[RMDB]
RNA sequence: GGGAACGACUCGAGUAGAGUCGAAAAUAUAACGCCUUGUUCCGUGAAGGGUUUGUCGAUCGUCUCGCUAUUCCUGUUGACUCGAAACCUGGUGUGCUUGCCCAUCUUGCCUGUAGUGUGAUUGACGUAACUGUUCAAUGUUCGCAUUGAACAGUUAAAAAGAAACAACAACAACAAC
Reactivity to DMS in 0.01 (KOAc 150mM, MgCl2 10mM, bicine 150mM(pH8.5), 24C), signal-to-noise 8, nucleotides 027 to 126: u010a100u010a100a110c120g010c020c020u000u000g010u000u000c030c020g010u010g000a100a100g000g000g010u000u000u000g020u000c040g000a060u010c120g010u010c060u000c060g020c070u010a140u000u000c030c020u000g020u010u010g010a100c050u000c050g000a060a070a080c060c030u000g010g010u000g020u000g010c060u000u000g010c030c020c030a080u000c050u000u010g010c030c020u000g010u000a060g020u000g010u010g010a110u000u000g010a140c180g000
Reactivity to 2A3 in 0.01 (KOAc 150mM, MgCl2 10mM, bicine 150mM(pH8.5), 24C), signal-to-noise 3, nucleotides 027 to 126: u140a000u040a050a040c040g030c000c030u000u070g040u080u000c030c010g030u040g080a050a060g040g010g050u040u040u110g120u040c020g010a050u040c040g060u010c000u010c030g030c050u040a070u100u060c000c000u000g040u120u100g040a070c020u000c060g030a100a080a050c040c030u020g040g020u050g040u020g050c000u020u080g030c000c000c030a020u060c050u040u090g020c030c030u040g050u140a090g010u090g030u050g140a190u070u100g010a020c010g010

Structure probing data (DMS and 2A3) for a 177-nucleotide construct. 2A3 adducts were read by reverse transcription with SuperScript II with manganese. The data come from the RNA Mapping Database (RMDB), library OK2TST.